Structure probing data (2A3 and DMS) for a 177-nucleotide construct. For 2A3 the reverse transcriptase was SuperScript II with manganese. The DMS profile rests on 12,797 reads. The reactions ran in a buffer of 150 mM KOAc, 10 mM MgCl2 and 150 mM bicine (pH 8.5), at 24 C.
RNA sequence: GGGAACGACUCGAGUAGAGUCGAAAAUCAAACGAUUUCGAUCGUUUGAAACGGACCACUCCUGCGGGACUUAAGGCCAUACGGACAGCCGGGUCCACUGCCAGUCAUUCGGUUUCGACCGAAUGAAGUUCGUAAUAAUUUUCGAAUUAUUACGAACAAAAGAAACAACAACAACAAC
Reactivity to 2A3 in 0.01 (KOAc 150mM, MgCl2 10mM, bicine 150mM(pH8.5), 24C), signal-to-noise 4, nucleotides 027 to 126: u020c000a000a010a000c010g010a010u040u080u200c210g090a020u010c000g000u010u000u010g000a030a000a010c060g020g020a010c010c010a030c050u030c010c010u050g020c120g050g010g000a030c010u160u150a170a080g050g000c020c010a070u090a140c080g070g020a050c030a020g000c010c010g040g000g000u000c010c000a030c020u060g030c030c010a020g080u020c000a000u000u000c000g010g030u040u070u120c230g090a020c000c000g000a000a000u010g000a010a050
Reactivity to DMS in 0.01 (KOAc 150mM, MgCl2 10mM, bicine 150mM(pH8.5), 24C), signal-to-noise 8, nucleotides 027 to 126: u000c000a010a000a010c000g010a010u000u000u020c180g020a020u000c000g010u000u000u000g010a020a090a110c160g000g000a060c020c020a110c160u000c010c010u000g020c100g010g000g010a050c070u010u010a100a090g010g010c010c030a100u010a100c180g000g000a060c120a150g000c020c020g000g000g000u000c010c000a090c130u010g010c030c060a100g000u000c000a010u000u000c000g010g000u000u000u010c190g000a030c000c000g000a010a000u000g000a020a060